[RMDB]
RNA sequence: GGGAACGACUCGAGUAGAGUCGAAAAUGCUUGAACAACCGACAGAAUUGAACACGUUGUUUGGGUGUUGGUGGUGGCUAGACUUGAAAUAAGGAAGGGAAUACUGUAAGCGCACCAAAUUGUCGGAACUGCUUUGUUCUUUCGAGAACAAAGCAGUAAAAGAAACAACAACAACAAC
Reactivity to DMS in 0.01 (KOAc 150mM, MgCl2 10mM, bicine 150mM(pH8.5), 24C), signal-to-noise 1, nucleotides 027 to 126: u000g010c030u000u000g000a030a050c150a070a070c010c040g000a080c140a060g000a110a120u000u000g010a030a080c090a140c120g000u000u000g000u000u000u020g000g000g010u000g010u010u000g000g070u000g000g080u000g020g000c030u000a050g000a240c020u000u000g000a070a050a050u000a100a060g030g010a110a100g000g000g000a060a110u000a080c140u010g010u000a070a110g020c050g050c050a030c030c020a010a090a190u000u010g000u000c030g000g030a150